[RMDB]
RNA sequence: GGGAACGACUCGAGUAGAGUCGAAAAGGUCCUUAGUGGACAAAGCUUGACUGCCACAUUUGUACCUUCUACUAAAGGGGUUAGUGUGCUUGGCAAUCCCUAAAGUAAACUUGGACUGCAAUAUUGGACUGUGAAUAUCAUUCGUGAUAUUCACAGUAAAAGAAACAACAACAACAAC
Reactivity to DMS in 0.01 (KOAc 150mM, MgCl2 10mM, bicine 150mM(pH8.5), 24C), signal-to-noise 9, nucleotides 027 to 126: g000g010u000c010c010u000u010a100g030u010g010g010a050c040a060a100a100g010c080u000u000g010a090c050u000g010c050c010a040c040a080u000u000u000g010u000a070c020c010u000u000c070u000a130c180u010a060a180a050g010g000g000g010u000u000a060g020u000g010u000g010c090u000u000g000g010c030a060a070u000c010c080c020u000a050a130a070g010u000a040a070a070c140u010u000g010g000a060c060u000g010c110a060a070u010a140u000u010g010g000
Reactivity to 2A3 in 0.01 (KOAc 150mM, MgCl2 10mM, bicine 150mM(pH8.5), 24C), signal-to-noise 9, nucleotides 027 to 126: g050g010u010c000c010u050u090a150g020u170g030g000a020c020a050a090a010g040c030u090u110g050a070c030u040g050c050c010a040c020a090u050u030u100g050u030a050c010c000u100u190c030u090a130c020u090a080a140a050g010g010g020g000u020u020a130g010u040g040u060g070c030u050u060g040g000c000a010a050u020c000c000c000u060a110a100a010g040u030a030a100a090c060u050u060g040g030a040c050u060g020c070a100a060u070a140u260u170g080g020

An RNA of 177 nucleotides, treated with DMS and 2A3 and read out base by base.
For DMS the reverse transcriptase was MarathonRT.
Conditions: 150 mM KOAc, 10 mM MgCl2 and 150 mM bicine (pH 8.5), 24 C.